[RMDB]
Notes: The record gives the reactivity of an RNA of 207 nucleotides to DMS and 2A3. The DMS profile rests on 4,427 reads.
RNA sequence: GGGAACGACUCGAGUAGAGUCGAAAAGGAGGGGCCCCUGUCCGGAGGGCAAAGAGCCUUCUCUUCCUUGCUCUCGUGGCUGGGAAACUUGGAAACCCUUUCCCACGGGCAAGCAGAUGCGAUGAUUUGACUCUUGAGAGCUUAGGCAGAUGCAGCAAUAAUCACUAUAUUUCGAUAUAGUGAUUAUAAAAGAAACAACAACAACAAC
Reactivity to DMS in 0.01 (KOAc 150mM, MgCl2 10mM, bicine 150mM(pH8.5), 24C), signal-to-noise 2, nucleotides 027 to 156: g000g000a050g030g000g050g020c090c020c020c030u020g010u010c020c030g020g010a050g010g020g000c020a020a050a090g000a030g030c110c070u000u000c070u000c040u000u000c000c000u050u010g010c000u000c010u040c070g020u000g020g040c010u000g000g000g000a090a090a050c070u000u000g000g010a150a150a170c010c010c010u000u000u000c020c000c010a140c140g000g020g060c010a050a120g050c050a120g000a150u000g010c060g010a150u000g000a170u000u010u000g000a130c000u000c020u010u010g000a200g000a050g040c010u000u000a090g020g020c020a090g010a100u000g010c040a050g000c070a180
Reactivity to 2A3 in 0.01 (KOAc 150mM, MgCl2 10mM, bicine 150mM(pH8.5), 24C), signal-to-noise 4, nucleotides 027 to 156: g060g020a050g020g000g020g010c020c020c000c000u010g060u050c000c030g080g040a010g010g000g010c010a010a030a000g050a020g030c030c000u270u100c030u040c000u060u040c030c010u030u030g000c020u010c000u030c030g090u110g010g000c010u020g000g010g020a080a070a050c080u130u160g030g040a100a070a100c000c000c010u000u060u030c010c010c010a010c020g010g010g000c050a100a070g000c010a020g040a090u050g020c030g080a090u060g050a070u100u140u150g070a140c010u040c040u170u160g080a140g010a010g130c020u100u120a060g030g010c010a020g020a070u050g000c010a010g030c010a010